RNA sequence: GGGAACGACUCGAGUAGAGUCGAAAAGCAUGAACCAGACAUGCAUUUAGUGCUACGAAUACAGUAGCACAUCUGGAGAUAGCGGCAAGUUUAGUUUAAGGGAUAGGGAAGCCGCACCCACCCAUAAGGUAGUACGAUCGUUCGCGAUCGUACUACCAAAAGAAACAACAACAACAAC
Reactivity to 2A3 in 0.01 (KOAc 150mM, MgCl2 10mM, bicine 150mM(pH8.5), 24C), signal-to-noise 1, nucleotides 027 to 126: g020c000a000u000g000a030a100c000c010a020g000a000c000a000u000g000c060a050u120u110u080a020g010u000g030c010u000a000c000g040a240a170u300a270c070a040g000u000a000g000c010a000c000a010u030c000u030g030g010a010g060a040u140a060g000c020g020g040c110a160a120g100u040u210u200a090g030u030u170u090a190a100g000g030g010a050u210a180g060g000g020a110a000g000c000c040g020c000a080c020c000c030a010c030c000c000a040u080a090a050
Reactivity to DMS in 0.01 (KOAc 150mM, MgCl2 10mM, bicine 150mM(pH8.5), 24C), signal-to-noise 1, nucleotides 027 to 126: g000c010a010u000g000a140a220c000c000a000g000a030c000a030u000g020c000a040u020u010u000a100g000u000g000c000u020a000c000g000a220a100u000a230c120a130g040u000a000g000c000a000c000a000u000c020u000g030g000a100g030a200u010a070g090c170g000g030c030a110a100g020u000u000u000a060g020u000u000u000a050a030g000g030g000a060u000a100g010g010g000a090a300g060c010c000g010c030a140c010c000c010a090c050c000c000a070u010a100a090
This 177-nucleotide RNA was probed chemically with 2A3 and DMS.
It was measured as part of the RMDB library OK2TRN.
The 2A3 profile rests on 821 reads.
For 2A3 the reverse transcriptase was SuperScript II with manganese.
DMS adducts were read by reverse transcription with MarathonRT.
Conditions: 150 mM KOAc, 10 mM MgCl2 and 150 mM bicine (pH 8.5), 24 C.